Record summary
The data come from the RNA Mapping Database (RMDB), library 15KLIB. Structure probing data (DMS and 2A3) for a 170-nucleotide construct. 2A3 adducts were read by reverse transcription with SuperScript II with manganese.
RNA sequence: GGGAACGACUCGAGUAGAGUCGAAAAACGACUGAGAAAGAAAAGAGAGCAACGGGGCUAGCUGCCGGGUGUUCCAUCCAUGGGAUCGGUGCCGAGUGAGGCUUAUCCCGGGGGUGACGCCUCGGUCCAAGAGGGUACUUCGGUACCCUCAAAAGAAACAACAACAACAAC
Reactivity to DMS in 0.01 (KOAc 150mM, MgCl2 10mM, bicine 150mM(pH8.5), 24C), signal-to-noise 5, nucleotides 027 to 129: a050c030g040a050c050u080g000a000g040a040a050a040g030a060a000a060a080g000a000g000a060g000c000a160a060c110g010g010g020g030c050u000a220g040c020u050g000c040c020g040g060g030u020g020u000u040c100c070a050u030c000c110a100u060g050g040g010a040u000c060g020g040u060g000c020c000g000a100g040u000g040a140g000g020c000u060u040a080u040c020c010c040g040g020g010g010g010u030g020a080c210g000c000c020u020c000g030g010u070c070c070a100a070
Reactivity to 2A3 in 0.01 (KOAc 150mM, MgCl2 10mM, bicine 150mM(pH8.5), 24C), signal-to-noise 7, nucleotides 027 to 129: a000c030g020a010c020u060g010a010g020a090a060a000g070a010a070a020a010g090a000g000a000g030c030a090a030c050g010g000g020g050c020u040a040g020c000u060g100c000c000g000g000g000u040g030u090u050c030c010a000u010c010c020a110u170g110g000g020a030u080c090g020g070u130g040c010c000g020a040g090u180g060a050g020g020c010u090u090a050u070c000c010c000g010g000g000g000g000u050g000a020c050g000c010c010u020c020g010g010u010c040c000a090a010